This 207-nucleotide RNA was probed chemically with 2A3 and DMS. The 2A3 profile rests on 5,524 reads. DMS adducts were read by reverse transcription with MarathonRT. For 2A3 the reverse transcriptase was SuperScript II with manganese.

RNA sequence: GGGAACGACUCGAGUAGAGUCGAAAAUCGUCGUAAUUCUAAGUUAAAACGUUACGACCAUGUUAUUCACUCGCAUGACAUGAGUGAUGUGAGCCUUCAUGAUAUAAGUGUCGCUCUUAAUUCCAUUAAGGAUGCUGUUAACAAUCCGGUGGCGAAACGAUAUUCAGUACUUCGGUACUGAAUAUCGAAAAGAAACAACAACAACAAC
Reactivity to 2A3 in 0.01 (KOAc 150mM, MgCl2 10mM, bicine 150mM(pH8.5), 24C), signal-to-noise 8, nucleotides 027 to 156: u080c020g010u000c000g000u010a020a010u140u030c100u170a120a180g140u160u180a160a240a030a040c080g000u010u000a000c000g000a000c020c010a020u050g020u070u100a120u090u070c010a000c030u010c020g040c050a060u100g060a130c010a080u190g030a040g030u040g010a020u040g050u050g030a030g020c000c020u030u050c050a030u050g100a040u080a030u040a240a060g030u030g040u090c020g010c020u010c000u040u120a110a110u170u030c040c030a030u060u070a090a050g030g010a040u040g030c070u070g050u190u120a090a040c030a040a040u000c010c010g030g000u000g000g010c030g020a050a030a020
Reactivity to DMS in 0.01 (KOAc 150mM, MgCl2 10mM, bicine 150mM(pH8.5), 24C), signal-to-noise 3, nucleotides 027 to 156: u000c040g030u000c020g010u000a010a010u000u000c050u000a100a170g050u000u000a070a070a110a140c120g000u000u000a020c010g010a020c000c060a050u000g020u010u000a070u000u010c070a110c000u000c000g000c050a040u000g020a100c080a130u010g020a140g020u000g010a030u000g000u010g010a110g020c010c040u000u010c060a080u000g010a120u010a090u000a040a140g020u010g010u000c130g000c030u000c030u000u010a070a120u000u000c020c020a140u000u000a110a110g020g000a140u010g010c030u000g020u000u010a080a070c070a070a090u010c020c040g000g030u000g000g020c080g010a060a070a180